[RMDB]
RNA sequence: GGGAACGACUCGAGUAGAGUCGAAAAACUCUCCAACUACUUACUACCGAUAUCAGAAAUUACAUUUGGAAAUAUGAAAUUGCGGUUAAGAACACAUCACGUGCUCACCCGAACCGACGUAGUGUUAUUAGUGGCGCAUUAAAGGAUGCAUCACUUACGACCAGUAGUCAUUCGUGACUACUGGUCGAAAAGAAACAACAACAACAAC
Reactivity to 2A3 in 0.01 (KOAc 150mM, MgCl2 10mM, bicine 150mM(pH8.5), 24C), signal-to-noise 3, nucleotides 027 to 156: a000c040u050c010u050c010c020a130a100c010u130a060c020u200u130a020c080u070a070c020c050g110a100u090a070u220c090a110g150a120a170a150u180u090a220c140a180u100u060u200g100g070a070a130a090u180a080u070g080a120a140a100u130u170g010c100g000g000u040u110a080a050g050a130a000c000a000c000a130u300c090a070c080g030u030g000c000u020c000a070c010c060c040g040a010a010c080c010g020a000c000g050u030a030g000u030g060u210u030a080u100u110a030g000u000g000g000c020g000c000a000u000u090a190a130a110g150g030a000u020g010c000a000u040c010a010c020u100u030a030